[RMDB]
Chemical mapping of a 207-nucleotide RNA with DMS and 2A3. The 2A3 profile rests on 7,300 reads. In probing experiments dimethyl sulfate is read out at A N1 and C N3, which are open when not base-paired. 2A3 adducts were read by reverse transcription with SuperScript II with manganese. Source: RMDB library OK3TST, as collected in RNAgym. Values cover nucleotides 27 to 156.
RNA sequence: GGGAACGACUCGAGUAGAGUCGAAAAAGAUGCUGACAUAGGUGAAAAUGCCAAGAUCCACUUCUCUUUCAGCAAUCUAGUCUCCAACAUUGCCAGGAGAUUAUUUCACCUCAAUGCCACCACUGGACUUAUCACAAUCAAAGAACCACUGGAUAGAACUAAAUUAUGCUUUCGAGCAUAAUUUAGUAAAAGAAACAACAACAACAAC
Reactivity to DMS in 0.01 (KOAc 150mM, MgCl2 10mM, bicine 150mM(pH8.5), 24C), signal-to-noise 3, nucleotides 027 to 156: a090g010a090u000g010c020u010g000a080c080a070u000a060g010g030u000g000a030a050a070a090u000g000c020c040a070a090g000a090u000c030c070a070c080u000u000c040u000c000u000u000u000c030a070g010c050a050a110u000c070u010a050g010u000c020u010c020c010a080a110c050a110u000u000g020c070c080a220g030g030a090g000a040u000u000a050u020u000u000c020a050c020c000u000c050a060a080u010g020c010c010a040c030c030a040c040u000g000g010a150c060u010u000a080u010c070a070c070a060a110u000c070a030a080a090g000a090a070c020c020a030c050u000g010g010a130u010a110g000a110
Reactivity to 2A3 in 0.01 (KOAc 150mM, MgCl2 10mM, bicine 150mM(pH8.5), 24C), signal-to-noise 8, nucleotides 027 to 156: a000g040a010u040g000c020u010g020a020c020a100u190a040g030g000u030g040a050a050a060a060u130g030c050c040a050a010g040a070u040c040c020a030c030u130u050c030u010c000u030u080u060c020a010g000c000a020a040u030c020u020a010g030u000c010u000c030c010a080a070c030a170u120u220g070c050c030a020g010g010a010g010a010u040u010a050u010u080u030c050a090c020c010u040c040a050a070u080g030c020c020a020c010c000a020c040u030g030g020a030c020u050u070a070u150c030a030c060a160a050u120c060a130a130a030g040a060a070c020c020a030c040u010g010g050a060u030a120g080a040

The RNA was probed in 150 mM KOAc, 10 mM MgCl2 and 150 mM bicine (pH 8.5) at 24 C.